[RMDB]
RNA sequence: GGGAACGACUCGAGUAGAGUCGAAAAAAGAUUACAACACAGACUUCAUCUAUGAAUCACACCACAGACAACCCAAAGAAUCACUCACACACGCAUCAGUUCUAUCAGCAUACACAGCAUCAUACAAAACAACAGCCAUCAAAUCAAUUGCAGAUAAUCUACAGUAACACUUCGGUGUUACUGUAGAAAAAGAAACAACAACAACAAC
Reactivity to DMS in 0.01 (KOAc 150mM, MgCl2 10mM, bicine 150mM(pH8.5), 24C), signal-to-noise 2, nucleotides 027 to 156: a130a090g020a110u000u010a140c080a080a100c000a110c110a090g010a100c040u000u000c080a090u020c020u000a050u020g000a070a070u010c000a070c020a070c040c010a060c040a050g010a020c060a040a090c030c020c030a110a080a070g000a070a100u020c010a070c020u010c010a030c020a070c050a050c110g040c040a040u010c020a080g010u000u010c060u000a130u000c070a050g050c090a110u000a030c080a080c060a090g000c010a100u010c020a120u010a090c070a050a050a110a110c020a040a060c030a010g020c010c020a030u000c040a010a060a110u020c020a060a090u000u010g010c000a070g010a120u030a130a140
Reactivity to 2A3 in 0.01 (KOAc 150mM, MgCl2 10mM, bicine 150mM(pH8.5), 24C), signal-to-noise 3, nucleotides 027 to 156: a000a000g070a040u130u110a030c020a120a000c020a080c000a050g070a060c020u080u010c070a070u030c050u080a110u190g070a020a000u090c000a000c000a010c010c010a020c040a030g050a040c020a020a040c030c010c020a030a080a010g050a030a040u090c040a020c020u010c000a030c000a000c000a000c070g000c010a020u020c020a040g020u070u000c020u050a060u050c040a000g030c020a010u070a100c040a010c000a050g050c000a020u030c000a000u050a140c050a010a080a120a020c020a060a020c000a040g000c020c020a040u100c060a100a070a000u050c030a020a030u190u110g000c000a010g060a070u000a060a040